[RMDB]
Conditions: 150 mM KOAc, 10 mM MgCl2 and 150 mM bicine (pH 8.5), 24 C. Chemical mapping of a 177-nucleotide RNA with DMS and 2A3. The DMS profile rests on 1,596 reads. DMS adducts were read by reverse transcription with MarathonRT. DMS (dimethyl sulfate) methylates the pairing face of unpaired adenines and cytosines. It was measured as part of the RMDB library OK1LIB.
RNA sequence: GGGAACGACUCGAGUAGAGUCGAAAAAGAUGCUCACGAGAACGAGAUGACACUUCGACGGGCGACGCACAUUUUCAGGAUCACUGAGCUUUACGCGACCGUUGUAUGCGUCGCAGUGAGAGAAUGAUGAGGGGACUACCUUCGGGUAGUCCCCUCAAAAAGAAACAACAACAACAAC
Reactivity to DMS in 0.01 (KOAc 150mM, MgCl2 10mM, bicine 150mM(pH8.5), 24C), signal-to-noise 1, nucleotides 027 to 126: a000g000a070u000g000c000u000c010a050c050g090a090g000a080a150c100g020a190g080a060u050g020a050c040a030c060u030u000c050g000a170c050g020g000g000c020g000a030c080g000c060a020c120a000u000u020u040u000c050a130g000g000a050u020c190a100c050u010g000a090g000c090u000u010u050a010c190g060c060g000a060c000c010g020u020u000g040u000a100u000g010c000g010u040c020g000c010a090g000u010g010a070g020a050g020a110a070u000g000a100
Reactivity to 2A3 in 0.01 (KOAc 150mM, MgCl2 10mM, bicine 150mM(pH8.5), 24C), signal-to-noise 2, nucleotides 027 to 126: a020g090a050u100g000c000u010c000a000c040g030a050g010a240a080c130g030a040g010a070u110g050a040c130a110c100u020u000c020g090a040c090g040g040g000c000g010a030c000g030c000a010c040a130u000u010u030u120c010a040g060g000a170u120c030a070c130u200g050a050g010c040u000u050u150a050c070g000c020g000a000c000c000g000u000u040g080u080a040u160g060c070g000u000c000g000c000a000g000u000g000a060g000a040g140a130a080u080g080a000